[RMDB]
This 177-nucleotide RNA was probed chemically with 2A3 and DMS.
DMS (dimethyl sulfate) methylates the pairing face of unpaired adenines and cytosines.
It was measured as part of the RMDB library TTRDEL.
The RNA was probed in 150 mM KOAc, 10 mM MgCl2 and 150 mM bicine (pH 8.5) at 24 C.
RNA sequence: GGGAACGACUCGAGUAGAGUCGAAAAGAUAUGGAUGGGUGGGAGCUUGCGAUCGGAAACGAUCGGCAAGCGAGGAUCACCUAUCCUAAGUCAAAGGAUGCCUACUACUUCGGUAGUAGGCAUCCAACCCACCUUAUUAGUUCGCUAAUAAGGUGGGAAAAGAAACAACAACAACAAC
Reactivity to 2A3 in 0.01 (KOAc 150mM, MgCl2 10mM, bicine 150mM(pH8.5), 24C), signal-to-noise 2, nucleotides 027 to 126: g000a010u020a000u050g010g000a000u000g000g000g010u000g000g010g010a020g000c000u010u010g010c010g000a000u000c000g020g000a010a010a010c010g000a010u010c020g100g090c030a000a000g000c010g000a050g000g000a000u000c000a010c000c010u000a000u000c000c000u000a000a010g000u010c040a160a010a070g010g000a000u000g000c010c000u000a000c000u010a010c000u030u170c300g050g000u000a010g000u000a000g000g000c000a000u010c000c000a000a000
Reactivity to DMS in 0.01 (KOAc 150mM, MgCl2 10mM, bicine 150mM(pH8.5), 24C), signal-to-noise 2, nucleotides 027 to 126: g000a000u000a050u020g000g000a010u010g010g000g010u000g010g000g000a010g020c000u000u000g010c000g000a000u000c000g020g000a020a010a030c000g010a000u000c010g000g010c000a000a000g020c000g000a120g010g000a140u010c000a010c000c000u000a010u000c000c000u000a010a060g010u000c010a100a130a150g000g000a010u000g000c000c000u000a010c000u000a010c000u000u010c200g030g000u000a000g010u000a010g010g010c000a000u000c000c010a030a030